[RMDB]
RNA sequence: GGGAACGACUCGAGUAGAGUCGAAAAUGCGAAGUCUCGGGAUUGUGUGAUGGACAGUCUAUUCCUGACCAGCCCAGCGCACCAGUAGUCAAAAAAUUACAGUACUGGCUGGUUUCGCAAUUCGGGACGAACCCACCAAAUUCGUUUGGUGGGUUCGAAAAGAAACAACAACAACAAC
Reactivity to DMS in 0.01 (KOAc 150mM, MgCl2 10mM, bicine 150mM(pH8.5), 24C), signal-to-noise 2, nucleotides 027 to 126: u020g000c130g000a060a140g020u000c020u000c040g030g010g010a020u000u000g000u000g010u000g030a110u000g000g000a120c220a150g010u000c080u010a180u000u000c040c000u000g000a070c020c000a000g000c190c000c010a020g000c020g000c180a070c090c110a090g000u000a010g000u020c070a000a040a080a200a080a070u000u000a050c030a110g000u000a210c010u000g000g000c050u000g010g000u000u000u010c010g010c010a060a070u000u000c010g010g000g000a100
Reactivity to 2A3 in 0.01 (KOAc 150mM, MgCl2 10mM, bicine 150mM(pH8.5), 24C), signal-to-noise 1, nucleotides 027 to 126: u170g000c040g110a120a020g040u040c020u000c000g060g020g040a050u010u010g010u000g000u060g110a100u110g010g000a010c030a050g090u060c060u120a250u000u140c000c000u030g000a000c010c000a000g010c010c010c010a030g030c080g000c020a040c000c020a050g030u000a000g060u080c160a070a070a070a040a020a040u100u080a010c010a010g060u080a030c000u000g040g040c020u000g000g000u050u020u040c020g000c000a000a000u000u000c010g000g000g000a000